[RMDB]
RNA sequence: GGGAACGACUCGAGUAGAGUCGAAAAAUCCGGGUGGGUUGCGAGAGGCGGCAUGCAAAUGCCGUCCCAGAUGAAUGGCUGCCACGUUCCGGGUCAAACCGGGGCCAUACAGAACCCGGCUUACAGGAUUACUUGGCAGAUUCGUCUGCCAAGUAAUAAAAGAAACAACAACAACAAC
Reactivity to 2A3 in 0.01 (KOAc 150mM, MgCl2 10mM, bicine 150mM(pH8.5), 24C), signal-to-noise 3, nucleotides 027 to 126: a000u000c000c000g000g000g000u060g020g050g010u040u060g060c060g030a190g010a060g100g020c010g000g000c000a000u020g030c030a220a010a000u000g000c000c000g000u050c000c000c010a080g010a080u170g100a160a060u090g100g000c010u010g020c030c000a050c050g000u040u000c020c000g030g000g020u060c050a110a000a010c000c000g000g000g020g030c040c010a070u100a110c090a070g040a020a010c020c000c000g020g000c000u020u050a040c060a030g120g010
Reactivity to DMS in 0.01 (KOAc 150mM, MgCl2 10mM, bicine 150mM(pH8.5), 24C), signal-to-noise 4, nucleotides 027 to 126: a050u020c000c010g000g000g060u010g000g010g010u010u000g010c090g000a140g000a100g040g020c020g000g000c020a010u010g000c300a070a090a000u000g000c000c000g000u010c000c010c050a140g010a150u020g000a140a050u010g010g010c010u010g000c070c060a090c190g000u020u010c000c000g020g000g010u000c300a040a090a150c000c000g010g000g000g000c030c050a060u010a100c120a030g020a140a030c010c010c010g000g000c160u010u000a100c170a120g000g000